[RMDB]
RNA sequence: GGGAACGACUCGAGUAGAGUCGAAAAUCUCAGCCCCUCCACCUUGGGGUGCCCUAUUCGGAGCACUGCAGUUCCCGAUAGAAAGGCUAAGCACCUCGCAAUGAGGUAAGGUGGGACUUUUCCUUCUCAUUGCAACAUUGUUCGCAAUGUUGCAAUGAAAAGAAACAACAACAACAAC
Reactivity to 2A3 in 0.01 (KOAc 150mM, MgCl2 10mM, bicine 150mM(pH8.5), 24C), signal-to-noise 2, nucleotides 027 to 126: u000c010u000c010a000g000c000c010c000c000u000c020c000a010c010c010u000u010g000g000g000g040u050g020c010c000c000u040a060u000u040c010g000g010a000g010c050a040c190u300g040c080a100g020u030u020c040c010c000g000a000u020a020g070a070a100a010g000g000c000u010a080a010g080c050a020c020c010u000c010g030c050a150a210u290g000a000g000g000u000a000a000g030g000u000g000g000g020a020c050u120u070u050u090c020c000u050u020c040u020
Reactivity to DMS in 0.01 (KOAc 150mM, MgCl2 10mM, bicine 150mM(pH8.5), 24C), signal-to-noise 1, nucleotides 027 to 126: u000c030u000c010a250g000c030c010c000c010u010c000c000a080c020c030u000u010g010g000g030g010u010g010c030c060c000u000a150u000u010c300g000g050a080g000c000a120c150u000g010c170a070g010u000u000c070c040c070g030a030u000a050g020a090a110a160g000g000c050u000a090a090g030c220a120c010c040u000c040g040c110a030a050u000g000a030g010g020u010a000a010g020g020u060g020g000g040a120c090u000u010u010u000c020c050u000u010c050u000
Annotation
The record gives the reactivity of an RNA of 177 nucleotides to 2A3 and DMS. The DMS profile rests on 633 reads. For 2A3 the reverse transcriptase was SuperScript II with manganese. For 2A3, 1,998 sequencing reads were counted. High 2A3 reactivity points to a flexible backbone, as in loops and unpaired stretches.